[RMDB]
Chemical mapping of a 177-nucleotide RNA with 2A3 and DMS.
The reactions ran in a buffer of 150 mM KOAc, 10 mM MgCl2 and 150 mM bicine (pH 8.5), at 24 C.
For 2A3, 2,839 sequencing reads were counted.
RNA sequence: GGGAACGACUCGAGUAGAGUCGAAAAAGCACGUGUGGAAUUGUUUAUAUCGAGGGUGACACUUCAGGCCGUUUGAUAUAGUUGUUUGGUUUGUGGCCUGGUGGCGGAAACGGCGGUGUGUUAUGGCCAAUAUUAAUAUUUUCGAAUAUUAAUAUUGAAAAGAAACAACAACAACAAC
Reactivity to 2A3 in 0.01 (KOAc 150mM, MgCl2 10mM, bicine 150mM(pH8.5), 24C), signal-to-noise 4, nucleotides 027 to 126: a000g050c020a020c020g040u060g020u030g020g040a110a080u070u060g070u100u200u080a120u040a060u120c030g040a040g010g040g010u040g040a020c010a000c050u110u110c040a020g020g000c000c000g010u000u020u080g040a040u040a000u010a120g010u000u010g030u020u090u060g060g020u040u040u040g050u020g020g000c000c000u000g020g010u010g020g000c000g020g000a040a030a020c020g000g000c000g030g000u040g000u000g010u020u030a050u040g040g000c010
Reactivity to DMS in 0.01 (KOAc 150mM, MgCl2 10mM, bicine 150mM(pH8.5), 24C), signal-to-noise 7, nucleotides 027 to 126: a070g020c050a030c060g010u010g020u000g000g010a100a100u020u010g010u010u010u010a060u010a070u020c040g000a060g010g000g010u000g010a110c060a050c080u020u010c060a040g020g010c000c010g010u010u010u020g000a080u020a060u010a080g000u000u010g000u010u000u010g010g010u010u000u010g020u010g000g010c020c020u010g010g020u010g000g010c050g000g000a040a050a080c130g000g010c020g010g010u000g000u010g010u000u010a080u010g010g010c170